[RMDB]
RNA sequence: GGGAACGACUCGAGUAGAGUCGAAAAAUGGUACGCUGGGUCCGACCCUUGCGUACCACAGGGAGCGAAUCUGAAGCGCGCACGGAUUCGCAUCGAUCUGUGGACGCAAGCGGACCUGUGCUGAAGCGCGCACGGCAACCGAAAGGUGCGGAAUCAACUUUACAAGAUGGUUCGCCAUCUUGUAAAGAAAAGAAACAACAACAACAAC
Reactivity to 2A3 in 0.01 (KOAc 150mM, MgCl2 10mM, bicine 150mM(pH8.5), 24C), signal-to-noise 3, nucleotides 027 to 156: a000u090g030g010u040a020c010g010c020u000g030g000g000u010c000c010g020a130c210c060c000u000u010g010c030g000u040a270c010c000a000c000a000g000g000g000a020g000c010g000a000a000u000c010u030g030a190a020g010c000g000c000g010c010a010c010g000g000a000u010u010c020g070c010a010u300c010g000a000u000c000u000g000u000g000g000a000c010g010c000a000a010g040c000g000g010a000c000c000u000g000u000g000c010u000g010a110a040g000c010g000c000g000c000a010c010g000g000c000a010a000c000c010g040a040a030a040g000g000u010g000c000g010g040a020a040u070c020a020a080
Reactivity to DMS in 0.01 (KOAc 150mM, MgCl2 10mM, bicine 150mM(pH8.5), 24C), signal-to-noise 2, nucleotides 027 to 156: a050u010g000g020u000a040c030g010c000u000g000g020g000u010c030c090g000a300c160c300c040u000u000g020c000g050u000a040c010c030a000c010a010g030g000g000a020g020c010g010a020a010u000c030u000g010a100a050g060c020g000c000g060c000a300c040g010g000a030u000u000c000g020c010a100u000c160g000a020u000c010u020g020u000g000g020a050c020g010c020a060a040g000c000g020g000a010c000c100u000g050u000g000c030u000g000a070a080g000c010g040c050g010c000a300c030g000g010c010a090a070c010c010g000a080a080a190g020g020u000g000c000g020g000a150a230u000c010a070a170

Overview
Conditions: 150 mM KOAc, 10 mM MgCl2 and 150 mM bicine (pH 8.5), 24 C. The record gives the reactivity of an RNA of 207 nucleotides to 2A3 and DMS. For DMS the reverse transcriptase was MarathonRT.